Conditions: 150 mM KOAc, 10 mM MgCl2 and 150 mM bicine (pH 8.5), 24 C. Structure probing data (2A3 and DMS) for a 177-nucleotide construct. The DMS profile rests on 940 reads. For 2A3 the reverse transcriptase was SuperScript II with manganese. The 2A3 profile rests on 1,198 reads. DMS adducts were read by reverse transcription with MarathonRT.
RNA sequence: GGGAACGACUCGAGUAGAGUCGAAAACAGAUCUCUCUCUAGAUUCCAAUAGAGAAUCGAGAGAAAACUGGCUCUCCCUUAGCCAUCCGAGUGGACGUUGUCCUCCUUCGGAUGCCCAGGUCGGACCGAAUAUUUCCGUGUUCGCACGGAAAUAUUCAAAAGAAACAACAACAACAAC
Reactivity to 2A3 in 0.01 (KOAc 150mM, MgCl2 10mM, bicine 150mM(pH8.5), 24C), signal-to-noise 1, nucleotides 027 to 126: c020a000g070a050u040c020u000c010u000c010u000c030u180a050g000a000u020u000c030c020a160a300u150a240g190a020g000a050a010u000c000g000a000g000a010g000a060a000a000a040c050u010g050g000c000u000c030u020c020c020c000u000u140a030g080c060c010a000u000c010c000g020a020g060u070g020g030a050c270g170u100u300g070u080c020c000u000c020c060u080u070c020g010g010a010u000g000c010c000c000a060g040g040u060c040g030g020a030c040c000
Reactivity to DMS in 0.01 (KOAc 150mM, MgCl2 10mM, bicine 150mM(pH8.5), 24C), signal-to-noise 1, nucleotides 027 to 126: c020a010g010a130u010c100u000c010u000c000u000c000u020a210g020a010u000u000c000c030a230a150u020a170g000a150g020a000a000u000c000g010a000g000a000g000a000a000a050a030c020u010g000g020c080u000c170u020c010c000c020u010u000a130g000c140c030a040u000c000c020g010a050g010u000g020g000a040c060g020u000u020g010u000c040c030u000c080c070u000u000c010g000g000a000u000g000c090c070c040a060g040g000u000c050g000g010a250c180c080